[RMDB]
RNA sequence: GGGAACGACUCGAGUAGAGUCGAAAAAACUACUCAGCCCAAUACCGGGAGUGUGGUUCCCCAUUACUCUUGGUUUUCGGGCAUUACCCAAUUCCAGAAGGGAAAAGAGUUCCAGUUUGCAGGUGGAGUUCUAUAGUGUUUUCGAACACUAUAGAACAAAAGAAACAACAACAACAAC
Reactivity to DMS in 0.01 (KOAc 150mM, MgCl2 10mM, bicine 150mM(pH8.5), 24C), signal-to-noise 7, nucleotides 027 to 126: a030a020c020u000a010c010u000c000a170g010c010c010c000a050a050u000a020c020c010g010g010g000a020g020u000g020u000g000g000u000u000c220c190c000c020a040u000u010a050c000u000c000u000u000g000g010u000u000u000u000c170g030g010g020c010a060u010u010a090c030c020c020a090a130u010u000c060c050a130g010a130a120g010g000g000a050a050a080a130g000a090g000u000u000c030c040a090g000u000u000u000g020c090a050g010g010u000g000g010a230
Reactivity to 2A3 in 0.01 (KOAc 150mM, MgCl2 10mM, bicine 150mM(pH8.5), 24C), signal-to-noise 3, nucleotides 027 to 126: a000a000c020u040a020c010u010c020a030g000c050c010c000a010a010u030a020c010c010g040g000g000a010g000u020g000u010g040g010u200u190c080c140c000c020a010u160u250a010c000u000c000u000u000g000g020u010u000u030u080c110g010g000g000c000a000u010u040a010c020c000c000a020a050u130u020c020c000a050g070a270a100g120g020g040a000a070a030a050g070a020g000u030u040c040c000a060g060u050u100u130g070c080a030g020g080u070g060g080a090
Chemical mapping of a 177-nucleotide RNA with DMS and 2A3. The RNA was probed in 150 mM KOAc, 10 mM MgCl2 and 150 mM bicine (pH 8.5) at 24 C. It was measured as part of the RMDB library OK2TRN. Values cover nucleotides 27 to 126.